The record gives the reactivity of an RNA of 207 nucleotides to 2A3 and DMS.
Reactivities are given for positions 27 through 156.
For 2A3, 1,966 sequencing reads were counted.
The DMS profile rests on 7,075 reads.
RNA sequence: GGGAACGACUCGAGUAGAGUCGAAAAGUAGGUAAUCAUCUCCCGUCCGAUGGUAGUACAGCACUUGGCGGAAGUGUACGAGUACAGCGCGCUGUUGCUGAAUCCCAUCAGCCCGUAGACGGAGUUCGCGAUGAUCUUGUAGAUGUACUGCAUGGAGAACAGGGUUUAUGUUCGCAUAAACCCUGUUAAAAGAAACAACAACAACAAC
Reactivity to 2A3 in 0.01 (KOAc 150mM, MgCl2 10mM, bicine 150mM(pH8.5), 24C), signal-to-noise 3, nucleotides 027 to 156: g110u120a030g090g090u110a100a060u090c040a060u030c050u050c020c020c000g040u000c020c060g070a050u080g020g040u020a040g000u080a050c000a020g010c000a010c020u110u170g070g040c080g020g060a070a090g020u010g000u060a020c010g050a050g060u070a050c010a050g120c070g000c010g000c050u060g040u210u080g020c000u010g010a040a060u030c030c000c000a010u010c010a000g050c000c010c040g100u070a050g030a060c070g020g030a030g040u060u140c040g010c020g050a040u030g000a020u010c030u040u080g040u080a070g000a170u090g030u080a090c040u010g050c030a040u100g040g100a100g020
Reactivity to DMS in 0.01 (KOAc 150mM, MgCl2 10mM, bicine 150mM(pH8.5), 24C), signal-to-noise 3, nucleotides 027 to 156: g040u000a020g020g010u000a090a080u010c060a070u000c000u010c010c020c020g010u000c000c030g010a090u000g010g020u000a080g040u000a110c040a200g000c020a040c090u010u000g040g020c060g000g000a070a090g040u000g020u000a020c060g020a130g030u000a080c030a100g030c040g020c110g080c020u000g000u010u000g000c010u010g010a090a140u010c060c010c010a100u000c020a100g020c000c030c040g040u000a080g000a090c020g000g020a140g030u000u000c050g010c070g010a090u000g000a080u000c030u000u000g010u000a070g010a140u000g000u000a080c030u000g010c050a070u000g000g010a190g030